This 177-nucleotide RNA was probed chemically with 2A3 and DMS. Source: RMDB library OK1LIB, as collected in RNAgym. For 2A3 the reverse transcriptase was SuperScript II with manganese. The RNA was probed in 150 mM KOAc, 10 mM MgCl2 and 150 mM bicine (pH 8.5) at 24 C. The DMS profile rests on 1,207 reads. For 2A3, 454 sequencing reads were counted.
[RMDB]
RNA sequence: GGGAACGACUCGAGUAGAGUCGAAAACUUCAACAGAUACGGUCAAAAGCAAACACCAUACCUUCCUUGAGCUGUUCAUGACUGUAAGUUGCGCUUUUCAAGAAAUUUUCUAGUAGUUAAGGGGAAGAUAGUCAGUCGGUUUCGACCGACUGACUAUAAAAGAAACAACAACAACAAC
Reactivity to 2A3 in 0.01 (KOAc 150mM, MgCl2 10mM, bicine 150mM(pH8.5), 24C), signal-to-noise 1, nucleotides 027 to 126: c000u010u000c020a040a010c000a120g000a010u010a040c000g050g000u000c010a000a000a000a300g000c000a060a010a010c000a090c010c000a000u030a060c000c080u000u160c000c000u010u120g040a000g000c030u030g000u000u050c000a040u040g030a100c000u030g000u050a080a050g000u040u110g030c090g000c100u020u000u080u150c000a030a030g030a050a060a060u230u000u000u000c030u060a200g010u180a070g000u300u020a000a020g000g010g010g010a000a000g000
Reactivity to DMS in 0.01 (KOAc 150mM, MgCl2 10mM, bicine 150mM(pH8.5), 24C), signal-to-noise 1, nucleotides 027 to 126: c010u000u000c000a020a110c080a140g000a120u000a040c030g020g000u000c020a000a010a230a000g000c050a050a050a120c150a040c070c040a100u040a010c050c040u000u000c000c030u010u000g000a140g020c040u020g020u040u030c260a200u000g000a030c000u000g000u040a020a160g000u010u020g000c260g030c230u000u000u000u000c010a140a060g000a070a040a050u000u000u000u000c040u000a050g000u030a030g000u020u030a030a090g010g000g030g000a050a020g000